[RMDB]
RNA sequence: GGGAACGACUCGAGUAGAGUCGAAAAGUUUUGGAUUUUUCAGGCACGAUGUUUGAAAUGGGUAAUUUGUAUUUCGAUCCGAUGUUAGAGCAAGCGCAAUUCCAGUUACGUAAAUCACAGGACAAAGAUCCGAAAUAUUGCCCGAUUUGCGGUACAGAACUAUGACCGAGUUCGCUCGGUCAUAGUUAAAAGAAACAACAACAACAAC
Reactivity to 2A3 in 0.01 (KOAc 150mM, MgCl2 10mM, bicine 150mM(pH8.5), 24C), signal-to-noise 1, nucleotides 027 to 156: g010u030u030u060u060g030g000a000u000u050u060u080u030c070a070g010g010c040a010c130g130a100u130g020u070u070u070g020a030a030a030u010g010g010g010u060a130a120u020u110u180g090u080a050u030u030u070c060g030a030u050c000c020g040a080u090g010u010u060a040g010a010g070c000a110a070g000c000g020c040a020a010u040u060c010c000a040g020u080u110a100c070g010u070a020a020a020u030c050a070c000a100g030g000a020c010a050a240a020g040a060u000c040c000g080a000a000a000u160a010u000u110g030c020c000c060g010a010u000u000u160g030c020g000g010u050a030c010a000g170
Reactivity to DMS in 0.01 (KOAc 150mM, MgCl2 10mM, bicine 150mM(pH8.5), 24C), signal-to-noise 1, nucleotides 027 to 156: g010u000u010u010u020g020g000a240u000u000u000u010u000c050a110g030g100c020a110c060g010a040u000g040u020u010u000g000a010a050a050u020g020g000g030u010a020a030u000u010u000g030u000a030u000u000u000c010g010a060u000c000c020g030a250u000g010u010u020a090g000a120g020c020a060a170g000c050g000c030a030a100u000u010c110c060a170g030u030u000a000c070g000u000a040a010a070u000c050a090c080a230g090g010a060c050a030a140a070g000a090u010c060c110g020a010a110a070u000a120u000u000g010c040c030c000g030a120u010u000u000g010c090g060g040u000a130c110a120g020
Chemical mapping of a 207-nucleotide RNA with 2A3 and DMS. Reactivities are given for positions 27 through 156. The RNA was probed in 150 mM KOAc, 10 mM MgCl2 and 150 mM bicine (pH 8.5) at 24 C. The data come from the RNA Mapping Database (RMDB), library OK3TST. 2A3 adducts were read by reverse transcription with SuperScript II with manganese.